[RMDB]
RNA sequence: GGGAACGACUCGAGUAGAGUCGAAAAGCAAGGGCAAUUUUAUUACAAUUAGAGAAGCUAUCCAAAGAUAUGGUAGAGACGCUGUAAGGCUUGCUGCAGCAUAUGCUGGGAAUGCUGAAUUAGUUGACAUUAUUACCUCUUUCGAGAGGUAAUAAUGAAAAGAAACAACAACAACAAC
Reactivity to DMS in 0.01 (KOAc 150mM, MgCl2 10mM, bicine 150mM(pH8.5), 24C), signal-to-noise 9, nucleotides 027 to 126: g010c060a040a050g010g010g010c100a070a040u000u000u000u010a070u020u010a130c070a040a070u000u000a060g010a110g000a190a080g000c020u010a140u000c020c040a060a100a080g010a090u000a040u000g000g010u000a060g010a080g000a070c140g010c020u000g000u010a070a100g010g010c040u000u010g000c040u000g010c050a050g000c020a030u000a020u010g010c030u000g000g000g000a060a190u000g010c020u000g000a120a110u010u000a060g010u000u000g010a230
Reactivity to 2A3 in 0.01 (KOAc 150mM, MgCl2 10mM, bicine 150mM(pH8.5), 24C), signal-to-noise 6, nucleotides 027 to 126: g020c030a000a060g040g030g010c030a030a050u070u120u100u100a160u160u180a070c030a040a050u070u060a040g010a000g010a110a000g000c010u020a050u050c010c010a120a070a030g060a070u090a030u100g000g020u050a020g010a000g000a060c050g000c020u010g040u110a070a040g040g010c020u030u070g000c020u030g000c010a010g030c000a020u060a040u120g070c030u030g010g030g010a050a020u070g000c010u020g010a050a070u060u030a050g040u010u070g010a020

This 177-nucleotide RNA was probed chemically with DMS and 2A3. It was measured as part of the RMDB library OK2TST. For 2A3 the reverse transcriptase was SuperScript II with manganese.